[RMDB]
RNA sequence: GGGAACGACUCGAGUAGAGUCGAAAACAACAAAAGAUGCAGCGAAGCCGGUCGUGCAUGUUUUUAUAGCAACAUCACCUAUUCAUCUUGAACAUAAACUUAAAAUGUCUCAAGAAGACGUUUUAGCUACAUUCAAGGUGUUCGCACCUUGAAUGUAAAAAGAAACAACAACAACAAC
Reactivity to 2A3 in 0.01 (KOAc 150mM, MgCl2 10mM, bicine 150mM(pH8.5), 24C), signal-to-noise 1, nucleotides 027 to 126: c020a020a000c010a010a130a020a010g120a050u060g000c010a030g130c010g070a050a000g100c110c050g090g040u070c020g020u030g000c020a020u020g080u010u060u040u040u030a250u070a050g060c060a010a020c000a000u030c030a010c020c050u030a210u070u050c040a010u000c000u000u060g040a030a010c020a070u130a100a140a040c020u100u100a050a020a110a040u010g020u010c010u000c080a040a160g080a030a010g020a010c020g000u040u000u000u060a020g000c000
Reactivity to DMS in 0.01 (KOAc 150mM, MgCl2 10mM, bicine 150mM(pH8.5), 24C), signal-to-noise 2, nucleotides 027 to 126: c120a100a180c120a030a090a070a070g020a040u000g000c080a030g010c010g030a070a140g010c030c040g000g020u000c070g000u000g000c060a020u010g000u000u000u030u000u030a090u010a050g040c080a090a070c040a020u040c050a030c010c010u000a040u000u010c020a080u000c020u010u010g000a040a060c100a050u000a110a090a130c180u010u000a010a000a040a030u000g020u010c050u000c060a050a090g020a090a030g000a030c120g040u010u010u010u000a050g000c260